[RMDB]
Description
The data come from the RNA Mapping Database (RMDB), library M2PK90. An RNA of 177 nucleotides, treated with 2A3 and DMS and read out base by base. The reactions ran in a buffer of 150 mM KOAc, 10 mM MgCl2 and 150 mM bicine (pH 8.5), at 24 C. DMS adducts were read by reverse transcription with MarathonRT. Values are in units of 0.01, from 0 to 300, in steps of 10. Values cover nucleotides 27 to 126. The DMS profile rests on 992 reads. For 2A3, 695 sequencing reads were counted.
RNA sequence: GGGAACGACUCGAGUAGAGUCGAAAAGCAACAUAGAUCGUUCUAUUAACGAACACGCGGGGAUCGUCGGUGGUCGGCGAGCCCACGGACGUACUUGAUCGCGCGAACGAGUAAAAAUCGCCGGCAAGAAAGGGUUACAGUUCGCUGUAACCCUUUCAAAAGAAACAACAACAACAAC
Reactivity to 2A3 in 0.01 (KOAc 150mM, MgCl2 10mM, bicine 150mM(pH8.5), 24C), signal-to-noise 1, nucleotides 027 to 126: g040c020a050a180c010a090u140a010g050a170u020c030g030u070u000c050u090a300u130u100a130a070c070g010a010a010c060a010c030g060c060g000g000g030g000a120u120c000g040u000c020g170g090u160g050g180u180c060g000g010c020g000a010g030c020c010c020a030c010g030g000a000c000g030u040a060c010u000u150g040a140u240c000g000c000g010c010g090a010a000c050g000a040g140u130a040a160a000a000a000u030c020g030c030c000g050g000c010a000a080
Reactivity to DMS in 0.01 (KOAc 150mM, MgCl2 10mM, bicine 150mM(pH8.5), 24C), signal-to-noise 1, nucleotides 027 to 126: g000c090a070a050c090a080u000a080g000a090u010c020g000u010u000c060u000a190u010u000a060a040c120g000a030a090c080a080c020g000c020g020g010g000g020a140u000c000g010u000c000g000g060u000g010g030u000c030g010g000c000g010a080g000c120c010c010a030c000g010g000a080c040g000u000a080c070u000u000g030a100u000c040g010c090g020c130g010a050a040c000g000a050g000u000a020a050a040a020a110u000c000g000c010c000g020g020c140a060a070